[RMDB]
RNA sequence: GGGAACGACUCGAGUAGAGUCGAAAAUUCUUGAGCUGUACGUGAACGCGCAUAUUUUUGACACCAUGAAAACUGACCCGCGUGUUAGCCGUGAACUCCAGCUCACUGCCGCUAUUGAGAAUGAAUUUGAUAGCCGGGGGGGCGGAAUGUACCAGAAGCCAAUAUAUAGGUUCGCCUAUAUAUUGGCAAAAGAAACAACAACAACAAC
Reactivity to DMS in 0.01 (KOAc 150mM, MgCl2 10mM, bicine 150mM(pH8.5), 24C), signal-to-noise 1, nucleotides 027 to 156: u000u020c050u000u000g000a000g030c000u010g020u010a080c110g010u000g000a040a060c070g060c090g090c030a190u000a070u010u000u000u000u020g050a140c020a140c100c050a100u020g000a090a040a080a070c040u000g010a070c020c040c110g010c130g050u010g050u000u000a160g060c060c020g060u000g000a040a090c050u010c070c020a040g040c020u000c010a070c140u010g000c040c030g060c040u010a000u000u010g000a030g030a120a090u000g020a070a210u010u000u020g010a030u000a080g010c040c030g070g020g010g030g010g080g050c080g000g010a050a080u000g020u010a140c040c020a100g030a130a230
Reactivity to 2A3 in 0.01 (KOAc 150mM, MgCl2 10mM, bicine 150mM(pH8.5), 24C), signal-to-noise 3, nucleotides 027 to 156: u090u030c020u070u060g000a000g000c010u000g020u100a050c070g020u020g060a140a000c000g080c010g050c030a090u050a220u290u110u140u130u120g050a050c000a050c040c040a080u130g210a080a140a040a060c090u080g100a150c000c040c100g030c040g040u010g040u040u040a040g020c020c020g000u010g010a030a030c010u010c030c010a000g000c000u000c010a020c020u000g090c030c010g000c010u020a000u010u100g030a070g040a130a150u220g060a060a070u120u010u040g010a020u040a020g100c160c040g020g000g000g010g010g030g000c020g000g060a060a010u070g010u040a040c000c040a020g200a140a000